The record gives the reactivity of an RNA of 207 nucleotides to 2A3 and DMS.

RNA sequence: GGGAACGACUCGAGUAGAGUCGAAAACCUACUCAAUACGUCCUCGUCGUACAGAACGGUAACAUGUUUUCCGAACAUCCGCGCUUGGGUAUACGAGUAUACACCUUACCCAACCCUCUCCAACGGGAGUGCAUCCACGAGUUCGCUCGUGGAUGAACGUAUUACGCUCGUUCGCGAGCGUAAUACGAAAAGAAACAACAACAACAAC
Reactivity to 2A3 in 0.01 (KOAc 150mM, MgCl2 10mM, bicine 150mM(pH8.5), 24C), signal-to-noise 5, nucleotides 027 to 156: c010c010u030a060c040u050c030a030a100u070a100c040g080u050c000c010u040c020g060u030c020g010u070a050c040a080g100a140a030c020g030g010u080a060a040c060a180u160g070u030u050u030u060c030c040g020a040a030c020a060u050c000c050g030c010g020c110u020u030g000g000g030u010a020u010a050c080g020a030g120u020a020u070a060c090a090c030c040u090u120a070c010c010c020a030a060c030c020c010u060c010u010c020c040a190a100c090g040g010g000a030g030u060g040c000a000u000c000c000a000c010g000a000g030u070u080c170g060c100u000c000g000u000g000g000a000u000g000a000a000
Reactivity to DMS in 0.01 (KOAc 150mM, MgCl2 10mM, bicine 150mM(pH8.5), 24C), signal-to-noise 2, nucleotides 027 to 156: c040c000u020a060c000u000c040a150a140u000a060c070g020u000c000c010u000c010g000u000c060g020u000a130c080a070g000a090a190c030g000g000u000a080a100c110a080u010g000u000u000u030u000c020c040g010a050a150c060a040u000c040c020g000c040g010c060u020u020g000g010g020u000a060u010a100c070g010a140g020u000a090u010a110c130a090c040c030u040u010a050c050c000c000a070a030c010c020c030u000c030u000c030c050a080a150c140g030g010g000a060g000u000g020c000a040u000c020c000a020c010g010a110g030u000u000c230g010c040u010c000g080u000g000g000a000u000g000a030a070

For 2A3, 4,502 sequencing reads were counted. For 2A3 the reverse transcriptase was SuperScript II with manganese. The reactions ran in a buffer of 150 mM KOAc, 10 mM MgCl2 and 150 mM bicine (pH 8.5), at 24 C.